[RMDB]
RNA sequence: GGGAACGACUCGAGUAGAGUCGAAAAGGUAGUUUCACAGUAUUGCCCGCACAGAGUUACCCCGUGUUAUUCGUUACUUCUUAUCCUAAAAUCGGGAUAUUAGGGCAAACAAUAACGAUAACGUUUAGAGUAGGUACUGAUUCGUCAGUACCUACUCAAAAGAAACAACAACAACAAC
Reactivity to DMS in 0.01 (KOAc 150mM, MgCl2 10mM, bicine 150mM(pH8.5), 24C), signal-to-noise 5, nucleotides 027 to 126: g010g010u000a040g010u000u000u010c090a110c130a130g000u000a070u010u000g010c010c000c020g000c220a100c180a130g010a090g010u000u010a130c050c010c020c060g030u000g010u000u000a020u010u000c060g000u000u000a040c050u000u000c070u000u000a010u000c000c000u000a050a040a080a100u010c210g020g000g000a040u010a020u000u000a040g020g010g000c130a040a030a050c110a060a100u000a000a000c000g000a070u000a040a050c070g010u020u020u010a120
Reactivity to 2A3 in 0.01 (KOAc 150mM, MgCl2 10mM, bicine 150mM(pH8.5), 24C), signal-to-noise 4, nucleotides 027 to 126: g050g020u050a030g020u040u130u170c100a090c020a020g090u090a090u080u130g020c010c010c000g040c050a080c030a040g130a040g030u050u120a110c010c000c020c010g040u050g010u110u010a060u060u110c020g010u010u000a060c020u030u080c000u040u030a020u020c020c010u060a160a170a130a250u200c100g010g000g010a010u020a020u050u050a040g020g000g000c010a010a050a010c040a060a060u050a010a000c010g020a040u020a080a010c040g000u040u060u160a030
An RNA of 177 nucleotides, treated with DMS and 2A3 and read out base by base. Conditions: 150 mM KOAc, 10 mM MgCl2 and 150 mM bicine (pH 8.5), 24 C. 2A3 adducts were read by reverse transcription with SuperScript II with manganese.